An RNA of 207 nucleotides, treated with 2A3 and read out base by base. Reactivities are given for positions 27 through 156. The reactions ran in a buffer of 150 mM KOAc, 10 mM MgCl2 and 150 mM bicine (pH 8.5), at 24 C. The data come from the RNA Mapping Database (RMDB), library OK3TST.

RNA sequence: GGGAACGACUCGAGUAGAGUCGAAAAGGCUGAUGCCGGAGCCGAUACCGGAAUACGAGACCUAAUGUGCGGUCGAAUGCACUGAAGUACGAAAGUACGAAGAGGUCAAACCGAGGACCGAGACUCGAUAUGCUCGGUAGAUGGAGCUUUACAUCAAGCGCUAAUAGUACUUCGGUACUAUUAGCGCAAAAGAAACAACAACAACAAC
Reactivity to 2A3 in 0.01 (KOAc 150mM, MgCl2 10mM, bicine 150mM(pH8.5), 24C), signal-to-noise 2, nucleotides 027 to 156: g020g000c020u070g070a080u070g070c000c000g010g000a020g000c000c030g070a010u100a160c020c000g000g030a130a000u090a030c080g030a060g010a190c000c000u060a080a030u120g070u030g000c030g010g030u250c140g080a050a010u090g000c000a000c000u010g030a070a070g000u000a000c000g010a070a120a000g000u000a010c000g010a010a010g150a030g030g000u060c080a060a000a000c070c000g020a030g040g020a000c000c000g010a010g010a060c010u020c090g090a060u070a010u280g070c000u020c020g000g000u000a010g000a010u050g000g000a000g020c020u070u050u100a030c000a030u090c100a160a020